[RMDB]
RNA sequence: GGGAACGACUCGAGUAGAGUCGAAAACACCGGCGACAUUGCCAGCUGGUGGGUGCCUGGCAAGGUGCUGAAGGGCAUGGGUGGGGCCAUGGACCUGGUGGUGUGCGGUUGCAAGACGAUCGUGCUGGAUCAGUAAUAGGUUCGCCUAUUACUGAUCAAAAGAAACAACAACAACAAC
Reactivity to 2A3 in 0.01 (KOAc 150mM, MgCl2 10mM, bicine 150mM(pH8.5), 24C), signal-to-noise 9, nucleotides 027 to 126: c030a010c010c000g020g000c030g030a070c070a180u080u190g050c040c020a020g010c020u050g020g040u040g020g020g030u050g040c010c010u020g020g020c050a060a060g080g020u060g040c020u080g080a080a060g040g010g010c070a060u090g010g010g070u180g010g020g020g000c010c010a040u060g050g020a050c010c020u050g020g010u050g020g030u050g030u030g010c010g010g020u020u040g010c040a110a070g060a090c030g010a030u030c020g020u020g020c030u090g060
Reactivity to DMS in 0.01 (KOAc 150mM, MgCl2 10mM, bicine 150mM(pH8.5), 24C), signal-to-noise 7, nucleotides 027 to 126: c050a060c030c010g010g010c020g000a100c100a100u030u020g010c050c050a140g020c020u010g000g010u010g010g000g020u000g010c070c010u010g000g010c120a080a040g020g010u000g000c040u010g000a110a060g000g000g000c060a060u010g000g010g010u020g000g000g010g000c030c050a030u020g000g010a090c090c020u000g000g020u010g010g010u030g020u010g010c060g000g000u000u010g010c050a100a090g000a130c060g000a040u000c040g030u000g000c030u010g000
This 177-nucleotide RNA was probed chemically with 2A3 and DMS. The RNA was probed in 150 mM KOAc, 10 mM MgCl2 and 150 mM bicine (pH 8.5) at 24 C. For 2A3 the reverse transcriptase was SuperScript II with manganese.